[RMDB]
The record gives the reactivity of an RNA of 177 nucleotides to 2A3 and DMS.
RNA sequence: GGGAACGACUCGAGUAGAGUCGAAAAGGUGUGGCUGUGUGCGUGGCGCUGCGGGUUUCUGCCCGCCCUGGCCGCAAAGAAAACAAAACAAGAGGGAAGAAAUGUGUGCCCCGCCCCACAGGCCCUACUAAUAAAUAUCCUUCGGGAUAUUUAUUAGAAAAGAAACAACAACAACAAC
Reactivity to 2A3 in 0.01 (KOAc 150mM, MgCl2 10mM, bicine 150mM(pH8.5), 24C), signal-to-noise 2, nucleotides 027 to 126: g070g030u050g020u050g100g000c020u020g040u030g000u040g200c050g040u040g000g000c050g030c070u070g010c010g000g000g050u110u170u080c120u160g030c000c010c000g000c020c000c010u020g030g000c040c000g000c040a040a040a010g080a040a090a010a030c060a030a070a040a030c040a070a050g160a130g050g040g040a020a120g080a090a180a090u100g060u010g040u070g040c020c000c000c030g000c010c010c020c010a010c000a010g110g010c000c020c020u030a030
Reactivity to DMS in 0.01 (KOAc 150mM, MgCl2 10mM, bicine 150mM(pH8.5), 24C), signal-to-noise 5, nucleotides 027 to 126: g000g020u000g030u000g020g020c040u000g020u000g030u010g010c110g040u000g030g020c030g040c180u010g010c030g010g020g010u000u010u000c220u010g000c000c010c010g030c010c120c060u000g010g010c020c030g010c060a050a070a120g010a080a050a090a100c100a050a060a100a110c150a050a090g010a190g010g000g000a090a070g000a070a090a070u000g000u000g010u000g000c020c010c270c020g000c030c040c040c030a030c050a160g010g010c010c000c030u010a100
2A3 adducts were read by reverse transcription with SuperScript II with manganese. The data come from the RNA Mapping Database (RMDB), library OK2TST. The 2A3 profile rests on 2,061 reads. The RNA was probed in 150 mM KOAc, 10 mM MgCl2 and 150 mM bicine (pH 8.5) at 24 C.